[RMDB]
RNA sequence: GGGAACGACUCGAGUAGAGUCGAAAAUCUGGUUGGAUGGGAGCUGAGACUAGAUUAAUCCACAACUAUCGUCAUGGAAUUACUUAUAUAUAUACAAGAUCAUCUACAUGGCAUGCUCUUCCACAAAAGUUAACGUUGGCUUCGGCCAACGUUAACUAAAAGAAACAACAACAACAAC
Reactivity to 2A3 in 0.01 (KOAc 150mM, MgCl2 10mM, bicine 150mM(pH8.5), 24C), signal-to-noise 1, nucleotides 027 to 126: u010c010u000g010g150u040u010g210g020a160u120g050g050g100a000g000c000u000g020a000g000a160c070u110a000g000a000u000u050a030a060u070c000c000a010c030a030a250c110u180a010u160c030g170u000c020a010u020g000g110a130a070u100u020a070c010u000u000a000u000a070u000a000u020a020u010a300c030a050a050g000a220u060c060a030u000c010u020a020c050a000u020g000g000c000a000u090g000c130u000c000u200u000c030c000a000c070a020a130a000
This 177-nucleotide RNA was probed chemically with 2A3.
2A3 adducts were read by reverse transcription with SuperScript II with manganese.